[RMDB]
About this RNA: Conditions: 150 mM KOAc, 10 mM MgCl2 and 150 mM bicine (pH 8.5), 24 C. This 177-nucleotide RNA was probed chemically with DMS. For DMS the reverse transcriptase was MarathonRT. It was measured as part of the RMDB library VIROID.
RNA sequence: GGGAACGACUCGAGUAGAGUCGAAAAGGGGAUCCAGUGGAUCCGUGGGACUACCCUCUCCACCCUCCCAACACACUCCUUCCCCCCUGCGGGGCUCCCCCAUAAGAUGGCAGGAACCCACUCAUUGCGAUACUUUACAGUUCGCUGUAAAGUAUCGAAAAGAAACAACAACAACAAC
Reactivity to DMS in 0.01 (KOAc 150mM, MgCl2 10mM, bicine 150mM(pH8.5), 24C), signal-to-noise 1, nucleotides 027 to 126: g010g000g000g010a050u000c060c050a160g060u000g030g020a030u000c060c000g020u000g000g000g020a080c070u010a160c070c000c000u000c060u000c010c030a120c060c000c020u030c000c000c000a060a160c140a070c070a090c070u000c020c010u000u000c010c010c000c040c000c070u000g020c240g000g000g000g000c030u000c000c000c080c040c000a070u000a060a080g020a220u000g000g030c030a050g000g000a030a190c010c000c010a010c130u000c060a110u010u000g010